[RMDB]
RNA sequence: GGGAACGACUCGAGUAGAGUCGAAAAGUGCACUCCGAGUGCCUGAGCUGGUCGACGUCCAGCUCCCUCGGGACCUGCUGCUCUGGGCGGAAGAGUCUUCUGACACUUCUAGCCUAUUCAGCUUCGCCUGUACAAACAGGUUCGCCUGUUUGUACAGAAAAGAAACAACAACAACAAC
Reactivity to 2A3 in 0.01 (KOAc 150mM, MgCl2 10mM, bicine 150mM(pH8.5), 24C), signal-to-noise 2, nucleotides 027 to 126: g070u090g090c080a010c090u010c020c010g010a000g020u080g060c050c110u050g000a000g010c000u010g040g020u140c180g290a200c110g130u020c010c000a000g010c000u010c000c000c000u010c010g000g010g000a040c000c010u040g000c000u000g000c000u000c010u020g000g000g000c010g020g010a010a000g010a010g000u000c000u230u120c140u250g010a000c010a000c030u010u000c000u030a190g000c000c000u000a000u020u060c000a000g000c000u020u040c020g040c000
Reactivity to DMS in 0.01 (KOAc 150mM, MgCl2 10mM, bicine 150mM(pH8.5), 24C), signal-to-noise 3, nucleotides 027 to 126: g000u020g010c130a120c100u000c020c030g000a050g020u000g020c230c120u010g020a000g030c000u010g000g000u000c120g010a140c300g010u000c000c000a020g000c000u000c000c020c000u000c000g000g000g000a130c080c050u010g000c000u010g000c010u000c020u010g000g000g030c000g000g000a010a010g020a060g030u000c010u010u020c270u030g010a010c000a070c000u000u000c000u000a110g030c000c000u010a000u010u010c000a030g000c010u000u000c130g010c150

The record gives the reactivity of an RNA of 177 nucleotides to 2A3 and DMS.
DMS adducts were read by reverse transcription with MarathonRT.
The RNA was probed in 150 mM KOAc, 10 mM MgCl2 and 150 mM bicine (pH 8.5) at 24 C.
2A3 is a SHAPE reagent: it acylates the 2'-hydroxyl of flexible nucleotides of all four kinds.